[RMDB]
The record gives the reactivity of an RNA of 177 nucleotides to 2A3 and DMS. Reactivities are given for positions 27 through 126. For DMS, 15,493 sequencing reads were counted. For 2A3 the reverse transcriptase was SuperScript II with manganese.
RNA sequence: GGGAACGACUCGAGUAGAGUCGAAAACAAGGUUCAGAGUCAUCGUGCCCAUACCGUCGCGCAUGAGACCGGAGGCAAAGGCCGGCGUCACGAGGUCCAACGCGCUCGCGUUGUAGAAACCCGAGACAGUCAUACAUAUCUUCGGAUAUGUAUGACUAAAAGAAACAACAACAACAAC
Reactivity to 2A3 in 0.01 (KOAc 150mM, MgCl2 10mM, bicine 150mM(pH8.5), 24C), signal-to-noise 8, nucleotides 027 to 126: c020a050a070g100g010u120u110c040a020g030a040g140u060c040a070u050c100g060u060g030c020c010c010a030u080a070c030c030g030u030c030g000c010g010c050a050u080g030a010g040a120c020c010g040g030a040g030g020c050a070a070a050g060g000c010c000g000g010c010g020u040c020a020c070g040a050g000g030u030c010c010a020a020c020g010c000g030c050u060c070g010c020g020u010u020g020u020a050g100a090a070a030c010c010c010g020a030g020a050c080
Reactivity to DMS in 0.01 (KOAc 150mM, MgCl2 10mM, bicine 150mM(pH8.5), 24C), signal-to-noise 6, nucleotides 027 to 126: c070a120a080g000g030u000u000c060a090g010a180g000u000c030a050u010c060g000u010g000c000c020c040a140u030a110c060c050g000u010c050g010c100g000c060a060u010g010a110g010a060c070c030g000g010a090g010g010c090a050a100a070g010g000c010c030g010g000c070g000u000c040a070c050g020a120g000g000u000c050c030a040a050c040g000c030g030c150u030c130g020c040g010u000u010g010u010a070g000a080a080a060c010c010c000g030a130g010a100c160